[RMDB]
RNA sequence: GGGAACGACUCGAGUAGAGUCGAAAAAGUGCGAAUAUAACCAGGAAAGAAAGAAACUGGGAAAGAGUGUACGUUCCGAACUACGUUGAAUCGAAAAUAGGAGCUAAUCACUCGAAGAAGCGUAGAAGGGAAAUCAAUAGUUCGCUAUUGAUUUCCCAAAAGAAACAACAACAACAAC
Reactivity to DMS in 0.01 (KOAc 150mM, MgCl2 10mM, bicine 150mM(pH8.5), 24C), signal-to-noise 3, nucleotides 027 to 126: a070g030u020g000c030g000a060a070u000a100u020a090a300c030c000a000g020g000a080a080a120g030a260a130a160g020a080a130a090c010u000g020g000g020a030a060a100g030a040g010u000g010u000a120c190g010u010u000c000c000g020a070a220c190u000a080c030g020u020u010g000a140a090u080c010g000a050a030a060a080u030a100g030g000a000g000c040u020a130a080u060c040a040c020u000c010g030a020a060g000a190a100g000c050g000u000a030g010a120a120
Reactivity to 2A3 in 0.01 (KOAc 150mM, MgCl2 10mM, bicine 150mM(pH8.5), 24C), signal-to-noise 3, nucleotides 027 to 126: a010g180u110g010c040g090a160a000u150a030u000a090a040c000c000a000g100g040a190a130a040g070a190a180a030g060a030a100a020c000u000g010g030g020a040a080a000g030a030g020u100g000u000a000c030g000u010u000c000c000g030a050a040c030u040a050c030g030u050u070g180a070a120u150c020g040a040a010a010a090u100a070g030g030a000g000c000u030a080a000u130c010a010c010u020c010g030a060a010g040a030a010g020c030g040u060a040g070a200a110